[RMDB]
RNA sequence: GGGAACGACUCGAGUAGAGUCGAAAAGCUGGAACAGCGUGGGCGUCUCGAAGGCGAAGAUUUUUUUGAAUCAGCUUGGGUUUUUCUGCAGCGCAUUUGUGUAUAAGAGCGAAGGAUCCUUUACACACCUAUCCUAUAUCUUCGGAUAUAGGAUAGGAAAAGAAACAACAACAACAAC
Reactivity to DMS in 0.01 (KOAc 150mM, MgCl2 10mM, bicine 150mM(pH8.5), 24C), signal-to-noise 6, nucleotides 027 to 126: g000c040u010g010g000a100a120c130a080g010c050g040u010g010g010g010c030g010u020c030u000c080g010a100a070g000g000c020g000a080a100g010a010u000u000u010u010u040u030u030g010a050a030u000c040a210g000c020u010u000g000g000g000u010u010u010u010u010c020u020g010c050a080g010c040g010c050a060u020u020u020g020u000g000u000a030u040a040a040g000a050g020c040g000a110a120g000g000a100u010c040c020u000u010u000a030c030a080c130a130
Reactivity to 2A3 in 0.01 (KOAc 150mM, MgCl2 10mM, bicine 150mM(pH8.5), 24C), signal-to-noise 9, nucleotides 027 to 126: g020c020u050g050g050a090a050c030a060g020c020g040u060g020g040g010c030g040u020c020u020c070g070a070a030g040g010c040g040a090a050g010a110u050u040u030u040u040u120u300g080a030a030u040c020a030g030c000u050u050g010g000g040u040u040u020u040u030c020u060g030c020a040g010c030g000c060a060u040u130u130g040u010g010u000a060u020a220a090g040a010g040c050g030a040a020g060g020a060u050c010c000u040u090u080a030c050a000c000a010